[RMDB]
This 177-nucleotide RNA was probed chemically with DMS and 2A3. The 2A3 profile rests on 13,486 reads. Conditions: 150 mM KOAc, 10 mM MgCl2 and 150 mM bicine (pH 8.5), 24 C. For DMS the reverse transcriptase was MarathonRT.
RNA sequence: GGGAACGACUCGAGUAGAGUCGAAAAGUGCUGAUCAGCGACGGGCAGACCUUCGACGCGCCGCUGGUGGAAGACCAGAUCGGCGCCCUGGCAGGGCUGCAAGUGCCCGUGACGGUGGUGGCCGUGGAUUACUCAUGGGAUUCGUCCCAUGAGUAAUAAAAGAAACAACAACAACAAC
Reactivity to DMS in 0.01 (KOAc 150mM, MgCl2 10mM, bicine 150mM(pH8.5), 24C), signal-to-noise 9, nucleotides 027 to 126: g010u010g020c020u000g000a060u010c070a050g010c030g010a050c030g010g000g010c010a060g010a080c030c010u000u000c030g000a120c240g000c010g020c000c000g010c000u000g000g010u000g000g020a160a110g010a050c000c000a010g000a090u010c010g010g020c010g010c010c060c050u000g010g010c150a040g010g000g000c050u000g010c140a060a070g010u000g010c020c000c010g010u000g010a090c040g000g010u000g010g010u000g000g000c010c020g010u010g000g000
Reactivity to 2A3 in 0.01 (KOAc 150mM, MgCl2 10mM, bicine 150mM(pH8.5), 24C), signal-to-noise 7, nucleotides 027 to 126: g100u100g010c020u090g100a100u050c030a000g140c010g020a010c010g030g020g000c020a020g030a180c000c000u030u040c050g070a060c040g000c010g010c010c000g000c010u010g020g030u060g080g170a220a060g110a190c000c010a000g010a100u240c020g000g000c000g020c000c000c010u030g040g040c060a030g010g030g010c040u140g010c070a050a060g100u050g050c010c010c000g000u030g070a060c020g050g060u060g000g030u030g030g000c030c020g030u060g050g030